Chemical mapping of a 170-nucleotide RNA with DMS and 2A3. Values cover nucleotides 27 to 129.
[RMDB]
RNA sequence: GGGAACGACUCGAGUAGAGUCGAAAAACACAUACUGAUAUUGGUGUCUACAUUAGUAUGUCACUUGUAUUAGUCAUUGUAGUGAAGAGAUUGUACAACCCAUCACUUUCUAACUUUGCGUUAGCAUUACCUUGUUGCUUCGGCAACAAGAAAAGAAACAACAACAACAAC
Reactivity to DMS in 0.01 (KOAc 150mM, MgCl2 10mM, bicine 150mM(pH8.5), 24C), signal-to-noise 6, nucleotides 027 to 129: a010c080a050c070a000u040a050c020u020g040a040u020a050u000u000g000g000u020g000u000c030u000a010c070a120u050u040a100g040u000a030u000g020u020c050a000c030u020u020g050u040a050u010u050a000g020u020c200a040u000u030g000u020a000g040u030g000a050a040g040a080g000a100u000u000g030u000a100c150a060a040c000c050c030a050u070c130a130c060u020u050u050c020u030a060a040c000u010u060u120g030c150g050u000u000a030g040c170a070u040u090a110c170
Reactivity to 2A3 in 0.01 (KOAc 150mM, MgCl2 10mM, bicine 150mM(pH8.5), 24C), signal-to-noise 9, nucleotides 027 to 129: a000c040a010c010a010u040a020c010u000g030a000u020a020u050u100g040g010u020g000u000c020u030a030c020a140u150u050a120g020u020a030u300g010u020c000a000c000u020u040g020u010a020u020u020a010g010u000c110a040u050u110g040u050a170g020u020g050a070a030g060a010g030a090u080u120g080u110a060c040a070a090c060c010c010a030u090c030a060c020u090u170u060c030u030a050a050c020u070u110u250g050c070g050u030u030a020g000c010a070u010u140a110c010
Conditions: 150 mM KOAc, 10 mM MgCl2 and 150 mM bicine (pH 8.5), 24 C. For 2A3 the reverse transcriptase was SuperScript II with manganese. For DMS, 22,026 sequencing reads were counted.